Overview
Structure probing data (2A3 and DMS) for a 177-nucleotide construct. As a SHAPE reagent, 2A3 marks flexible, mostly unpaired nucleotides at the ribose 2'-OH. It was measured as part of the RMDB library TTRDEL.
RNA sequence: GGGAACGACUCGAGUAGAGUCGAAAAGAUAUGGAGUCACGAGAACAAGCGAGGAGCUCGGAAACGAGCUCUCCCCACCGAACUACUUGACGUGACUCCUAAGUCAAAAGAGUGCUUCGGCACUCAACAGAUCAAAAGACUUCGGUCUUUUGAUCUGAAAAGAAACAACAACAACAAC
Reactivity to 2A3 in 0.01 (KOAc 150mM, MgCl2 10mM, bicine 150mM(pH8.5), 24C), signal-to-noise 2, nucleotides 027 to 126: g020a010u010a010u060g020g000a010g010u000c000a000c040g080a120g090a300a140c060a030a060g220c040g110a060g130g000a020g060c000u000c000g000g000a010a020a020c010g020a020g010c000u000c000u040c010c010c010c010a130c070c080g150a210a090c090u240a050c040u240u040g040a040c010g020u010g000a000c000u000c000c000u010a010a000g010u020c020a000a000a140a100g020a000g000u020g000c000u050u100c230g110g000c010a010c010u000c010a000a010
Reactivity to DMS in 0.01 (KOAc 150mM, MgCl2 10mM, bicine 150mM(pH8.5), 24C), signal-to-noise 2, nucleotides 027 to 126: g000a010u000a070u010g000g000a030g000u010c000a000c010g030a180g000a140a140c040a020a040g030c110g010a090g010g000a020g000c000u000c000g010g000a030a040a040c000g000a010g000c010u000c000u000c020c020c070c120a250c190c140g000a080a100c120u020a210c000u000u000g020a140c000g010u000g020a010c010u000c000c000u000a010a010g000u020c030a120a060a060a070g010a000g030u000g000c000u000u010c140g050g030c020a000c000u000c010a050a160
The reactions ran in a buffer of 150 mM KOAc, 10 mM MgCl2 and 150 mM bicine (pH 8.5), at 24 C.